[RMDB]
RNA sequence: GGGAACGACUCGAGUAGAGUCGAAAAUGAAAAUGUGCGUCCCUCCCGAUGCUGCGCGCUCGGUCGAAGAGGACGACCACAGCCGAUAGAGGACUGCCGGUCUUCGGUCAAGGGAAAAAGAAAAAAACAUCUGUCUUACCUUCGGGUAAGACAGAUGAAAAGAAACAACAACAACAAC
Reactivity to 2A3 in 0.01 (KOAc 150mM, MgCl2 10mM, bicine 150mM(pH8.5), 24C), signal-to-noise 1, nucleotides 027 to 126: u100g050a010a020a030a060u140g050u100g050c010g010u000c000c010c010u000c000c000c000g000a070u280g000c030u100g050c040g010c000g000c130u000c030g020g030u030c080g030a030a030g100a140g010g020a000c020g000a000c020c020a040c010a020g030c000c010g100a090u150a190g060a030g050g060a060c010u090g140c090c030g020g050u030c000u050u060c000g010g010u010c040a080a100g130g060g000a000a000a100a030a000g190a040a070a030a010a050a000a000
Reactivity to DMS in 0.01 (KOAc 150mM, MgCl2 10mM, bicine 150mM(pH8.5), 24C), signal-to-noise 2, nucleotides 027 to 126: u020g000a120a070a090a080u030g010u000g000c020g020u000c000c000c000u010c020c010c000g010a050u020g000c010u030g000c180g040c140g000c020u000c020g020g000u020c240g000a040a040g020a120g010g010a010c020g000a100c040c050a030c070a090g030c020c020g000a120u000a150g020a080g020g010a050c020u000g000c140c070g000g020u010c010u000u000c040g020g020u010c050a140a110g000g010g000a070a070a060a080a130g040a000a000a060a050a050a030a130

About this RNA:
The data come from the RNA Mapping Database (RMDB), library M2PK90. Chemical mapping of a 177-nucleotide RNA with 2A3 and DMS. For DMS the reverse transcriptase was MarathonRT. The DMS profile rests on 1,037 reads. Conditions: 150 mM KOAc, 10 mM MgCl2 and 150 mM bicine (pH 8.5), 24 C.